[RMDB]
Conditions: 150 mM KOAc, 10 mM MgCl2 and 150 mM bicine (pH 8.5), 24 C. This 177-nucleotide RNA was probed chemically with 2A3 and DMS. 2A3 adducts were read by reverse transcription with SuperScript II with manganese. For 2A3, 3,537 sequencing reads were counted. Values cover nucleotides 27 to 126. DMS (dimethyl sulfate) methylates the pairing face of unpaired adenines and cytosines. For DMS, 1,308 sequencing reads were counted.
RNA sequence: GGGAACGACUCGAGUAGAGUCGAAAAGAUAUGGAUCGUAUACAACAACAGCUCCUACUCGGAAACGAGUGCGGAGACAUGUUGUACGAUCCUAAGUCAAAGCGUUAACACUUCGGUGUUAACGCAACGCAUGGCAUGAGUUCGCUCAUGCCAUGCGAAAAGAAACAACAACAACAAC
Reactivity to 2A3 in 0.01 (KOAc 150mM, MgCl2 10mM, bicine 150mM(pH8.5), 24C), signal-to-noise 2, nucleotides 027 to 126: g020a010u010a000u060g030g000a000u000c020g000u190a080u170a300c070a020a000c020a080a020c090a130g000c000u000c000c000u030a000c000u030c000g000g000a000a000a000c000g020a000g000u020g050c140g030g020a020g060a010c030a110u280g030u000u000g020u000a000c030g000a000u000c000c000u000a020a010g000u030c040a090a130a040g020c010g040u010u010a020a000c000a000c030u030u130c300g200g000u000g010u010u000a000a000c020g000c000a000a000
Reactivity to DMS in 0.01 (KOAc 150mM, MgCl2 10mM, bicine 150mM(pH8.5), 24C), signal-to-noise 1, nucleotides 027 to 126: g010a000u000a080u000g030g010a030u000c000g030u010a130u010a060c090a010a000c000a150a110c280a190g000c000u010c000c010u010a030c000u010c000g010g000a010a000a050c010g010a000g000u000g010c300g030g000a020g000a010c140a060u010g020u000u000g000u000a030c000g010a000u000c010c000u000a030a060g000u010c020a080a090a270g040c000g000u000u000a000a010c000a000c020u000u010c200g030g000u000g010u000u000a000a010c010g000c000a030a050